RNA sequence: GGGAACGACUCGAGUAGAGUCGAAAACGAUCAGUACGAGUGCGUACUGAUCGAAGCUAGUGGUGACACUAGCAAACAGUAGAUAUACAUAGCCGGAAUGUAUAACAACGUAGUAAACGCGCCAUACUACGACUACUGUAACCGGCAAGGCGCGAAAGCAUGUAGGUGUCUUCGGACACCUACAUGCAAAAGAAACAACAACAACAAC
Reactivity to 2A3 in 0.01 (KOAc 150mM, MgCl2 10mM, bicine 150mM(pH8.5), 24C), signal-to-noise 1, nucleotides 027 to 156: c020g000a000u010c000a000g000u000a000c000g020a020g160u150g300c030g010u000a000c010u000g000a000u000c000g000a010a020g010c000u000a000g000u000g000g020u020g000a000c000a000c000u000a000g000c000a000a060a000c000a000g150u120a000g020a090u000a000u000a090c020a020u010a020g000c020c010g040g000a030a010u020g060u000a080u030a100a060c050a020a030c010g000u000a000g020u000a000a040a020c020g000c000g030c000c000a000u000a010c000u000a000c000g060a000c010u090a000c000u060g000u020a010a040c000c000g030g000c000a000a010g000g000c000g000c000g010a000a000a000